Conditions: 150 mM KOAc, 10 mM MgCl2 and 150 mM bicine (pH 8.5), 24 C. The record gives the reactivity of an RNA of 177 nucleotides to 2A3 and DMS. Source: RMDB library M2PK50, as collected in RNAgym.
[RMDB]
RNA sequence: GGGAACGACUCGAGUAGAGUCGAAAACUCUGACGCUUCGGCGUCAGAGAAAGCUCUAAGCAGAUUGGCGAGGACGACGCUGCGGAGCGCGUUUGCCAACAAAAACGCAUAGAUUCGUCUAUGCGAACCUUAGGAAUUGUUUCGACAAUUCCUAAGGAAAAGAAACAACAACAACAAC
Reactivity to 2A3 in 0.01 (KOAc 150mM, MgCl2 10mM, bicine 150mM(pH8.5), 24C), signal-to-noise 7, nucleotides 027 to 126: c000u000c000u000g000a010c000g030c010u030u050c240g130g010c000g010u010c000a000g000a000g000a010a000a000g010c010u000c020u130a100a090g040c050a060g070a300u060u070g020g010c030g040a110g120g040a060c020g040a100c010g010c010u150g080c090g200g120a020g000c030g010c000g010u010u020u070g060c020c000a000a010c040a020a100a020a020a010c010g000c000a000u000a000g010a010u000u060c170g030u000c100u010a000u000g000c000g010a060a070
Reactivity to DMS in 0.01 (KOAc 150mM, MgCl2 10mM, bicine 150mM(pH8.5), 24C), signal-to-noise 5, nucleotides 027 to 126: c010u000c000u000g010a010c000g020c010u000u010c180g030g010c000g010u010c000a000g000a010g010a020a070a100g010c050u000c040u000a120a150g020c130a090g000a180u000u000g000g010c010g020a160g000g000a050c030g000a090c010g020c000u010g010c220g020g010a020g010c020g010c010g010u000u010u010g000c000c000a030a030c110a040a050a040a070a160c020g010c000a000u000a010g010a030u000u000c170g010u000c000u000a010u000g010c000g000a030a040